Overview: The record gives the reactivity of an RNA of 177 nucleotides to DMS and 2A3. The reactions ran in a buffer of 150 mM KOAc, 10 mM MgCl2 and 150 mM bicine (pH 8.5), at 24 C. The data come from the RNA Mapping Database (RMDB), library OK1LIB.

RNA sequence: GGGAACGACUCGAGUAGAGUCGAAAAACAGGAUCAGCUUGGAGAUCCUAGCGUAGUUCCAAGCACCAUGGACCAAGAGUAGGCGCUGCAAAUAGCGAAACUGGGCGAUCGAGUAGUCCGAUGCGCAACUACCACUCCUCUUCGGAGGAGUGGUAGUAAAAGAAACAACAACAACAAC
Reactivity to DMS in 0.01 (KOAc 150mM, MgCl2 10mM, bicine 150mM(pH8.5), 24C), signal-to-noise 2, nucleotides 027 to 126: a170c070a160g030g010a000u020c010a090g040c000u000u040g000g000a020g010a020u000c010c000u000a130g020c140g000u010a070g010u000u000c000c000a100a000g000c010a130c110c080a070u030g000g000a020c000c040a080a120g010a040g000u000a060g010g000c040g050c000u010g000c060a080a120a070u020a030g000c030g000a070a050a030c020u010g000g000g000c020g010a170u000c030g020a090g000u000a110g000u010c050c000g010a040u000g000c050g000c020a180
Reactivity to 2A3 in 0.01 (KOAc 150mM, MgCl2 10mM, bicine 150mM(pH8.5), 24C), signal-to-noise 1, nucleotides 027 to 126: a000c020a010g010g000a000u000c010a010g020c010u000u000g000g000a000g000a040u020c000c010u000a030g010c060g100u110a030g070u070u000c000c010a020a000g000c010a010c010c010a070u060g020g010a030c030c020a040a060g020a030g140u110a020g140g000c040g000c020u050g020c020a050a170a160u170a140g000c000g050a020a020a060c050u080g050g020g000c000g020a040u060c070g020a030g090u130a010g050u040c010c000g020a050u100g050c040g030c040a030